About this RNA:
An RNA of 207 nucleotides, treated with DMS and 2A3 and read out base by base. The 2A3 profile rests on 1,630 reads. The reactions ran in a buffer of 150 mM KOAc, 10 mM MgCl2 and 150 mM bicine (pH 8.5), at 24 C. DMS adducts were read by reverse transcription with MarathonRT. For DMS, 2,167 sequencing reads were counted.
RNA sequence: GGGAACGACUCGAGUAGAGUCGAAAAUACAGUCUUCGGACUGUAAGUACUGGGGUCUAGGAUGAAGAGGGACAUGCUCUGAAGCCUCCACGGAGCAACAGCCUCCCCACCUUCUCCUAGACGGAGGCACCCUGGCCCAUAUGCUUCGGCAUAUGAAAUACCGGUAGGUAUUCGUACCUACCGGUAUAAAAGAAACAACAACAACAAC
Reactivity to DMS in 0.01 (KOAc 150mM, MgCl2 10mM, bicine 150mM(pH8.5), 24C), signal-to-noise 1, nucleotides 027 to 156: u000a060c000a000g000u000c000u000u000c300g000g000a030c010u000g010u000a020a100g000u010a060c040u000g020g010g000g020u000c020u000a060g020g010a080u010g070a090a080g030a110g030g020g000a110c080a300u000g010c000u020c010u000g040a020a130g020c000c010u010c010c050a300c050g010g000a030g000c040a070a110c090a170g020c030c050u000c050c000c100c180a120c080c000u040u000c010u000c020c040u000a030g000a060c050g000g000a080g060g010c010a100c010c020c000u000g010g040c060c050c030a010u010a010u000g020c000u000u010c240g070g000c000a030u000a040u000g000a080a130
Reactivity to 2A3 in 0.01 (KOAc 150mM, MgCl2 10mM, bicine 150mM(pH8.5), 24C), signal-to-noise 2, nucleotides 027 to 156: u060a000c000a040g010u000c010u030u120c230g230g000a010c020u000g000u020a020a020g080u040a150c090u110g100g000g050g000u000c000u010a000g020g000a040u260g020a040a010g140a300g030g000g010a030c040a080u050g000c020u010c000u000g050a070a020g010c010c000u000c000c010a020c030g010g000a010g030c020a030a140c070a120g060c030c080u070c040c010c020c020a200c020c010u000u000c020u000c020c000u000a000g000a000c010g000g000a000g000g000c000a040c020c020c000u040g070g020c050c000c010a010u020a010u010g010c000u080u070c240g060g000c080a020u010a020u090g150a090a030